RNA sequence: GGGAACGACUCGAGUAGAGUCGAAAAUCUGGCUACUAGGUAUCGUGAAGUCUGACUCGGUCUACGAUACCUUAGCCAUAGACUACUUGUAGACUAGACCGAGUUAGACUUUAGUCAUGAGUGGUCACUACUGCUUUGUAUUCGUACAAAGCAGUAGAAAAGAAACAACAACAACAAC
Reactivity to 2A3 in 0.01 (KOAc 150mM, MgCl2 10mM, bicine 150mM(pH8.5), 24C), signal-to-noise 4, nucleotides 027 to 126: u030c010u020g000g020c000u010a020c020u020a030g100g110u150a080u190c050g100u090g080a000a010g000u010c010u000g020a010c010u000c000g000g000u000c000u010a010c010g000a010u000a010c010c000u000u000a000g010c010c000a010u090a010g030a050c000u010a010c010u020u070g000u010a030g010a010c000u000a000g000a000c010c000g000a000g000u000u010a010g010a010c010u000u000u010a020g010u000c030a050u090g060a000g000u010g000g000u010c020a000
Reactivity to DMS in 0.01 (KOAc 150mM, MgCl2 10mM, bicine 150mM(pH8.5), 24C), signal-to-noise 9, nucleotides 027 to 126: u010c050u000g010g000c000u000a010c050u000a050g010g020u010a040u000c060g010u000g010a020a010g010u000c010u000g000a050c020u000c000g000g000u000c000u000a010c030g000a300u000a000c010c090u000u000a010g010c010c060a120u010a070g000a120c010u000a010c220u000u000g010u000a030g010a300c300u000a010g010a010c000c000g000a020g000u000u000a030g000a020c000u000u000u000a070g010u000c090a060u010g010a020g010u000g000g000u000c010a170
Overview: This 177-nucleotide RNA was probed chemically with 2A3 and DMS. DMS adducts were read by reverse transcription with MarathonRT. The RNA was probed in 150 mM KOAc, 10 mM MgCl2 and 150 mM bicine (pH 8.5) at 24 C. Source: RMDB library OK2TRN, as collected in RNAgym. The DMS profile rests on 18,569 reads.